[RMDB]
RNA sequence: GGGAACGACUCGAGUAGAGUCGAAAAACUCCGAAGCCGCAUGGACGCGGUGUUUCUCCUCAAAGACGAAGUUGACGAAGAGCGAGACGGCGAAAUCGUCGAGGCUAUCAUCGACAGUAUAGCGACCGGGGAGAACGUGGAUACGGUUGGCGAGUGGUGCAUAUGUUAUAUUCGUAUAACAUAUGCAAAAAGAAACAACAACAACAAC
Reactivity to 2A3 in 0.01 (KOAc 150mM, MgCl2 10mM, bicine 150mM(pH8.5), 24C), signal-to-noise 4, nucleotides 027 to 156: a000c020u020c020c020g070a080a010g050c000c000g040c190a110u160g120g080a060c050g000c020g010g000u030g010u050u010u000c010u010c000c010u050c040a110a100a050g050a090c070g040a110a010g070u050u060g010a020c020g010a050a090g020a040g120c020g020a060g030a040c020g020g040c070g110a070a050a120u100c000g010u000c010g000a040g130g000c010u050a030u040c010a010u030c020g040a040c000a040g140u170a040u090a200g110c030g050a060c060c060g030g010g010g000a010g000a010a000c010g020u060g010g000a020u030a110c090g070g000u040u030g060g020c110g010a030g020u080g040g060
Reactivity to DMS in 0.01 (KOAc 150mM, MgCl2 10mM, bicine 150mM(pH8.5), 24C), signal-to-noise 3, nucleotides 027 to 156: a040c020u000c000c030g000a090a190g010c000c010g020c020a160u000g050g020a200c080g000c020g010g020u010g010u010u010u000c000u000c020c020u000c030a050a120a150g020a110c040g010a090a240g000u000u000g010a030c040g000a090a110g000a050g020c020g020a180g010a070c030g010g020c030g000a120a170a170u000c010g010u000c020g000a110g030g010c030u000a110u000c030a050u000c020g030a020c040a130g000u000a110u000a090g020c030g000a150c080c030g000g000g010g010a080g000a020a030c020g030u000g010g010a140u000a040c050g000g030u000u000g030g000c040g010a090g020u000g000g000

Overview
This 207-nucleotide RNA was probed chemically with 2A3 and DMS. Conditions: 150 mM KOAc, 10 mM MgCl2 and 150 mM bicine (pH 8.5), 24 C. Reactivities are given for positions 27 through 156.